[RMDB]
RNA sequence: GGGAACGACUCGAGUAGAGUCGAAAAAGGAAUUUGCUUUCACUUCAGUUAGGGUAAAGCUUCCCAAUGUGAAAAACUUAAGUGUCCUUUGAAAAGAAUCUGGGAUGUAAUAGUGCCUCCUAAAGAGUGGAAGUUACUAAGUAGCUUCUUAGCUUCCACCUUCUUAAAGCUUCGGCUUUAAGAAGGUAAAAGAAACAACAACAACAAC
Reactivity to 2A3 in 0.01 (KOAc 150mM, MgCl2 10mM, bicine 150mM(pH8.5), 24C), signal-to-noise 3, nucleotides 027 to 156: a000g110g020a120a080u000u100u150g020c010u020u030u030c030a020c010u120u070c060a080g000u080u170a080g010g010g040u040a070a090a050g030c000u090u070c010c010c000a060a090u130g030u020g000a130a050a000a000a030c030u070u040a110a020g050u020g010u090c020c020u070u070u160g150a150a170a010a020g100a020a110u050c040u060g040g020g010a030u050g040u150a100a040u030a140g100u050g030c010c010u000c000c010u070a100a060a000g070a010g030u030g000g000a000a000g010u070u060a040c020u040a080a100g010u050a030g100c030u090u070c000u060u030a010g030c010u020u000c010c000
Reactivity to DMS in 0.01 (KOAc 150mM, MgCl2 10mM, bicine 150mM(pH8.5), 24C), signal-to-noise 2, nucleotides 027 to 156: a050g040g010a020a060u000u000u000g010c040u010u000u000c030a030c030u000u010c020a240g000u000u000a030g020g030g060u000a030a050a070g020c010u000u000c000c000c000a080a090u050g040u090g000a060a070a060a090a040c030u000u010a090a250g000u010g040u000c000c010u010u000u020g010a140a060a060a230g000a130a080u000c070u020g000g010g000a080u000g000u000a060a110u000a090g010u000g000c010c010u000c040c000u000a060a060a070g000a100g000u000g040g000a040a000g000u000u000a060c060u000a050a140g010u000a140g000c030u000u010c030u000u000a070g020c020u000u000c010c010